[RMDB]
The data come from the RNA Mapping Database (RMDB), library M2PK50. The record gives the reactivity of an RNA of 177 nucleotides to 2A3 and DMS. The RNA was probed in 150 mM KOAc, 10 mM MgCl2 and 150 mM bicine (pH 8.5) at 24 C. For 2A3, 9,619 sequencing reads were counted.
RNA sequence: GGGAACGACUCGAGUAGAGUCGAAAACUUGGGCACUUCGGUGCCCAAGAAACGCUCAUCCUCAGAGCGCAAAAGUCGAACGAAUACAGUUCGACAUGAGGAAAACGGACCCGUUCGCGGGUCCGAACCUAUUAAAACAGUUCGCUGUUUUAAUAGGAAAAGAAACAACAACAACAAC
Reactivity to 2A3 in 0.01 (KOAc 150mM, MgCl2 10mM, bicine 150mM(pH8.5), 24C), signal-to-noise 4, nucleotides 027 to 126: c000u000u000g010g010g000c020a000c010u030u040c240g100g000u010g000c000c000c000a000a000g000a000a000a000c000g000c000u010c000a110u010c020c000u000c000a000g010a010g000c010g000c060a300a190a010a020g010u010c000g000a010a000c000g030a110a040u300a240c120a080g000u000u000c000g000a010c000a000u000g000a000g000g000a020a010a010a010c000g000g010a000c010c020c000g010u050u070c220g000c000g120g000g000u000c000c000g000a000a000
Reactivity to DMS in 0.01 (KOAc 150mM, MgCl2 10mM, bicine 150mM(pH8.5), 24C), signal-to-noise 4, nucleotides 027 to 126: c000u000u000g000g010g030c000a010c000u000u020c140g030g010u000g010c000c000c000a010a000g000a070a070a220c000g010c000u010c000a050u000c000c010u000c000a020g000a010g010c000g030c080a070a040a010a010g040u010c000g000a000a000c010g020a180a140u010a160c140a120g010u000u000c000g000a010c000a000u010g000a010g000g010a020a060a100a180c030g010g000a010c000c000c010g010u010u010c180g020c020g000g010g010u010c000c000g000a010a050